[RMDB]
RNA sequence: GGGAACGACUCGAGUAGAGUCGAAAAACGUAGGCACCUGUACGCAGGUGCCUACGAUAAGCGUUCUAUCUCCUUAAACAUUCAUCGUCUUGUACACGAUGGUUGUUUAAGGAGCUGAAACGCUAAAUUCUUAUUGUGGCUUCGGCCACAAUAAGAAAAAAGAAACAACAACAACAAC
Reactivity to DMS in 0.01 (KOAc 150mM, MgCl2 10mM, bicine 150mM(pH8.5), 24C), signal-to-noise 1, nucleotides 027 to 126: a130c040g030u000a000g030g020c000a000c000c010u050g000u060a090c210g010c000a000g030g020u020g000c000c000u000a000c000g010a020u030a040a020g010c010g020u000u010c010u020a020u010c000u000c000c000u000u000a020a000a000c000a000u000u000c000a010u000c010g000u020c020u000u090g000u050a160c300a000c040g010a000u000g000g000u000u000g010u010u000u000a000a000g000g000a000g010c070u000g000a050a030a010c010g000c000u010a030a050a080
Reactivity to 2A3 in 0.01 (KOAc 150mM, MgCl2 10mM, bicine 150mM(pH8.5), 24C), signal-to-noise 3, nucleotides 027 to 126: a000c010g010u000a010g000g000c000a000c000c000u010g000u050a020c260g000c050a000g010g010u000g000c000c000u000a000c010g000a000u000a000a000g000c000g000u000u000c060u060a060u020c010u000c000c000u000u000a000a000a000c000a000u050u070c000a000u000c000g060u010c030u090u280g160u260a040c060a000c030g000a000u000g000g010u010u010g000u000u000u000a000a000g000g000a000g000c000u010g010a000a020a000c000g000c000u000a000a070a040